RNA sequence: GGGAACGACUCGAGUAGAGUCGAAAAUGCCACGACCUGGCCGCCGAGCAUCCCGACAAACUUGAGGAGCUCAAGGCGCUGUGGUUCUCCGAAGCCGCCAAGUACAACGGGCUGCCGCUGGCCGAUCGUAAGUGAGCACUUUCGAGUGCUCACUUACAAAAGAAACAACAACAACAAC
Reactivity to 2A3 in 0.01 (KOAc 150mM, MgCl2 10mM, bicine 150mM(pH8.5), 24C), signal-to-noise 1, nucleotides 027 to 126: u120g040c010c040a030c040g060a010c010c050u050g000g000c010c010g000c010c040g010a020g040c000a080u000c000c000c030g020a040c080a110a160a020c020u040u060g020a080g050g070a060g070c000u040c120a060a050g070g010c070g010c040u040g050u070g030g000u080u010c080u020c040c050g130a100a010g020c010c010g050c000c020a020a030g000u010a100c030a160a030c040g010g020g000c020u000g010c000c020g000c040u050g000g020c000c000g020a040u080c020
Reactivity to DMS in 0.01 (KOAc 150mM, MgCl2 10mM, bicine 150mM(pH8.5), 24C), signal-to-noise 1, nucleotides 027 to 126: u000g000c020c020a090c060g010a010c010c040u000g010g000c040c000g030c300c010g000a140g020c000a030u010c010c020c000g000a080c160a130a100a040c040u000u000g020a210g000g000a100g020c010u000c100a030a210g010g010c050g010c030u010g040u000g030g000u000u010c080u030c100c040g000a130a050g000c020c040g000c040c000a010a010g010u010a020c160a260a170c060g000g000g000c070u000g020c010c020g000c060u000g030g010c020c020g010a050u000c070